[RMDB]
RNA sequence: GGGAACGACUCGAGUAGAGUCGAAAAUCUGUAGUCCAGGGAGAGAGAAUCUGAUCAGUCCCCUGGGUCAUUUUUCCACUCUGGUCCAAGCAGCUACAGCUGGCAUGGGAAAUAGUUCACACAGUAAAAACAUGGCUGUCAAGAAGAGGAGUAAAUAAGUGGAAAAUAGUUUCGACUAUUUUCCACUAAAAGAAACAACAACAACAAC
Reactivity to DMS in 0.01 (KOAc 150mM, MgCl2 10mM, bicine 150mM(pH8.5), 24C), signal-to-noise 1, nucleotides 027 to 156: u000c030u040g030u040a100g010u000c040c010a020g000g010g010a110g000a300g020a170g020a130a080u010c050u010g000a130u010c040a100g000u010c040c000c030c010u000g010g000g020u000c040a040u000u000u000u000u000c020c030a200c030u020c010u000g000g000u020c040c040a130a120g010c110a080g010c010u000a040c080a090g000c040u000g030g010c000a090u000g000g020g000a070a030a090u000a100g000u000u000c020a120c090a120c050a090g020u000a040a080a180a140a050c110a060u020g010g030c030u000g040u010c060a060a050g000a030a060g000a100g000g000a070g000u000a010a030a100u010a070
Reactivity to 2A3 in 0.01 (KOAc 150mM, MgCl2 10mM, bicine 150mM(pH8.5), 24C), signal-to-noise 1, nucleotides 027 to 156: u090c060u010g060u050a050g020u080c010c010a000g000g010g000a120g000a030g010a010g080a240a130u060c090u090g100a150u100c080a040g160u070c000c000c000c000u010g020g000g030u020c020a010u020u070u010u030u000c000c010a010c010u040c040u050g070g000u000c040c030a050a010g010c020a030g000c050u040a050c020a080g050c030u050g050g050c010a070u060g030g020g000a010a110a050u110a030g100u070u080c010a020c020a000c000a080g040u160a070a070a030a040a010c040a070u070g040g000c000u010g030u100c060a030a050g030a000a000g010a030g020g000a010g080u110a090a040a180u280a100